[RMDB]
Notes: An RNA of 177 nucleotides, treated with DMS and 2A3 and read out base by base. Conditions: 150 mM KOAc, 10 mM MgCl2 and 150 mM bicine (pH 8.5), 24 C.

RNA sequence: GGGAACGACUCGAGUAGAGUCGAAAAGAUAUGGAUCCCAACCAGCAACAGCGUACUGUCGGAAACGAUUACGACAUGCUGCAAGGGAUCCUAAGUCAAAAGGGAGGUUGCUUCGGCAACCUCCCAACAUCAAAGGUAGGUUCGCCUACCUUUGAUGAAAAGAAACAACAACAACAAC
Reactivity to DMS in 0.01 (KOAc 150mM, MgCl2 10mM, bicine 150mM(pH8.5), 24C), signal-to-noise 8, nucleotides 027 to 126: g000a050u000a300u000g010g010a010u000c000c000c000a050a300c300c020a020g000c000a030a070c260a110g010c010g000u000a010c300u000g020u010c010g000g000a110a080a140c030g030a030u000u000a010c010g000a040c080a190u000g000c000u000g010c020a040a270g010g000g010a010u000c000c000u000a010a080g010u010c030a070a050a100a120g000g010g000a000g000g000u010u000g020c000u000u020c200g020g000c000a010a000c000c000u000c000c000c000a000a020
Reactivity to 2A3 in 0.01 (KOAc 150mM, MgCl2 10mM, bicine 150mM(pH8.5), 24C), signal-to-noise 2, nucleotides 027 to 126: g020a010u090a060u170g020g010a010u000c000c010c000a010a020c010c000a010g000c000a010a190c020a220g050c010g010u060a110c140u180g030u070c010g040g020a050a070a030c020g020a030u030u080a000c000g040a060c040a060u110g000c000u000g000c020a050a050g030g000g000a000u050c000c000u000a040a000g040u040c010a000a000a130a130g060g010g000a000g000g000u010u030g030c070u110u200c300g110g000c020a020a010c000c000u010c000c000c010a000a020
High 2A3 reactivity points to a flexible backbone, as in loops and unpaired stretches.